An RNA of 177 nucleotides, treated with DMS and 2A3 and read out base by base.
The reactions ran in a buffer of 150 mM KOAc, 10 mM MgCl2 and 150 mM bicine (pH 8.5), at 24 C.
Reactivities are given for positions 27 through 126.
[RMDB]
RNA sequence: GGGAACGACUCGAGUAGAGUCGAAAACGAUGCUGCGUCUGCGGCGCCCGCGACAGCUAGUGUUUGGGAGCGGCGGCGCUGUCCACAAGAAGCGCAAAAGAGAGCGCACUGCGCGAUGGGAAUGGCGGCCAGACCUAUAGUUCGCUAUAGGUCUGGCAAAAGAAACAACAACAACAAC
Reactivity to DMS in 0.01 (KOAc 150mM, MgCl2 10mM, bicine 150mM(pH8.5), 24C), signal-to-noise 1, nucleotides 027 to 126: c060g000a070u010g000c050u000g060c030g020u000c090u030g110c000g070g020c010g030c070c030c020g010c000g000a070c080a020g020c050u000a120g020u000g020u000u020u000g020g000g010a080g040c010g000g000c040g000g000c030g000c000u020g010u000c020c020a080c120a090a180g010a190a090g000c000g030c030a070a080a180a110g000a140g010a070g000c090g010c030a060c110u010g000c060g010c080g020a100u000g000g010g020a100a080u000g020g010c100g010
Reactivity to 2A3 in 0.01 (KOAc 150mM, MgCl2 10mM, bicine 150mM(pH8.5), 24C), signal-to-noise 1, nucleotides 027 to 126: c040g100a130u150g020c060u020g000c000g010u000c040u130g000c030g130g000c030g080c050c060c030g060c040g020a140c050a100g090c070u130a110g160u060g190u220u160u170g100g000g030a020g000c020g050g000c000g080g010c000g000c000u000g070u000c010c000a070c070a080a000g150a110a050g000c030g000c000a080a020a020a060g050a010g000a010g010c040g050c000a100c070u100g000c010g000c000g010a060u060g020g000g040a020a170u080g080g050c110g030